An RNA of 177 nucleotides, treated with DMS and 2A3 and read out base by base. High DMS reactivity at an A or C suggests that its Watson-Crick edge is free. The RNA was probed in 150 mM KOAc, 10 mM MgCl2 and 150 mM bicine (pH 8.5) at 24 C. Values cover nucleotides 27 to 126. For DMS the reverse transcriptase was MarathonRT.
[RMDB]
RNA sequence: GGGAACGACUCGAGUAGAGUCGAAAACGCUACGGUGACAUCACCGACCUGUCCAACUACGGUGGUGCGCUGAUCGACCAGCGCGCCUUCGUCAAGAACGUCGACGCCAUCGAACGGGCCAAAGGCGUAGUACAAGGGAAUUCGUUCCCUUGUACUAAAAAGAAACAACAACAACAAC
Reactivity to DMS in 0.01 (KOAc 150mM, MgCl2 10mM, bicine 150mM(pH8.5), 24C), signal-to-noise 9, nucleotides 027 to 126: c050g020c050u000a110c050g020g020u000g000a130c200a120u010c040a120c040c010g010a060c060c090u000g000u010c030c040a100a110c170u010a040c010g010g010u000g000g010u000g010c010g000c010u000g000a060u020c220g010a140c140c010a010g000c010g010c010g010c010c000u000u000c010g010u000c200a130a100g000a100a080c070g010u000c020g010a160c300g000c040c040a070u000c050g000a080a070c100g000g000g000c020c050a040a080a140g010g010c050g010
Reactivity to 2A3 in 0.01 (KOAc 150mM, MgCl2 10mM, bicine 150mM(pH8.5), 24C), signal-to-noise 6, nucleotides 027 to 126: c040g000c070u120a040c030g000g020u020g050a110c050a220u270c010a070c000c010g020a030c010c030u060g060u040c030c040a080a050c090u100a010c020g000g020u010g000g010u020g010c000g000c000u020g010a130u200c130g150a130c080c000a000g000c000g000c000g000c000c000u010u030c010g020u020c030a070a060g050a160a030c030g030u020c020g040a050c050g010c020c010a070u090c070g060a080a070c110g030g000g000c020c020a070a100a040g030g000c020g010